RNA sequence: GGGAACGACUCGAGUAGAGUCGAAAAACGAGGCAAGCUCUGGAAAGCAACGCCGAGUCUCUGAGAAGAGGGAGCAUGGGGUGUGCUGAUUUAAAAACAGAAAAUGCAAAGUUGGACUGAAAAUAUCGUGAUUAAGAUACUUCGGUAUCUUAAUCACAAAAGAAACAACAACAACAAC
Reactivity to DMS in 0.01 (KOAc 150mM, MgCl2 10mM, bicine 150mM(pH8.5), 24C), signal-to-noise 2, nucleotides 027 to 126: a120c090g060a210g010g000c000a090a120g010c140u020c040u010g010g010a130a100a070g030c010a040a100c090g000c010c010g000a230g030u000c040u000c020u000g020a200g010a100a070g010a060g000g030g000a170g010c030a090u000g000g000g020g040u000g000u010g000c010u010g010a110u010u000u010a050a070a030a100a110c020a030g010a040a050a140a170u000g020c090a030a050a150g020u000u000g010g010a120c080u000g010a080a050a100a080u000a050u020c190
Reactivity to 2A3 in 0.01 (KOAc 150mM, MgCl2 10mM, bicine 150mM(pH8.5), 24C), signal-to-noise 2, nucleotides 027 to 126: a000c050g000a060g110g000c030a010a060g020c020u040c030u110g070g050a210a110a010g000c010a050a050c060g030c030c000g020a010g020u060c000u000c020u020g130a130g030a150a070g020a070g030g050g030a040g000c030a050u080g010g000g080g000u080g020u030g010c000u000g070a060u030u170u210a130a160a020a000a000c040a010g060a060a080a000a010u040g000c000a010a030a100g010u030u020g030g000a030c030u080g060a030a020a090a100u120a080u170c090